Record summary
Source: RMDB library OK1LIB, as collected in RNAgym. An RNA of 177 nucleotides, treated with 2A3 and DMS and read out base by base.

RNA sequence: GGGAACGACUCGAGUAGAGUCGAAAAUCCAGACCCUGACGAGCAGGGUAGUGUGAACUCGUUCUGGCCAUUACAGGACAGAGAGGGUCCACAACGUACUGCAACAAAGAGUGUCGUGGAUCUGGAAUCCGUACUGGACGUUCGCGUCUAGUACGGAAAAAGAAACAACAACAACAAC
Reactivity to 2A3 in 0.01 (KOAc 150mM, MgCl2 10mM, bicine 150mM(pH8.5), 24C), signal-to-noise 9, nucleotides 027 to 126: u000c000c000a000g000a010c000c000c010u030g010a010c020g030a020g030c000a000g040g040g010u030a080g010u010g010u010g020a030a010c000u000c010g120u150u080c010u010g000g010c000c010a060u120u160a180c130a230g000g010a000c000a000g010a010g020a030g010g010g010u010c010c010a010c010a040a030c050g300u300a040c010u000g040c000a100a060c040a130a250a070g150a090g070u180g010u030c030g070u110g000g030a150u000c000u000g000g020a010a060
Reactivity to DMS in 0.01 (KOAc 150mM, MgCl2 10mM, bicine 150mM(pH8.5), 24C), signal-to-noise 6, nucleotides 027 to 126: u010c000c000a030g000a020c010c000c010u010g000a020c050g010a160g010c000a020g010g000g000u010a030g020u000g010u010g000a060a010c000u000c000g000u030u000c000u010g000g010c000c000a110u020u050a190c280a180g000g000a010c000a010g010a020g000a070g000g000g000u000c010c000a000c010a020a030c060g010u050a220c000u000g010c020a190a130c240a080a120a110g000a160g010u050g010u010c000g000u020g000g000a060u000c010u000g010g000a020a120
Conditions: 150 mM KOAc, 10 mM MgCl2 and 150 mM bicine (pH 8.5), 24 C. DMS adducts were read by reverse transcription with MarathonRT.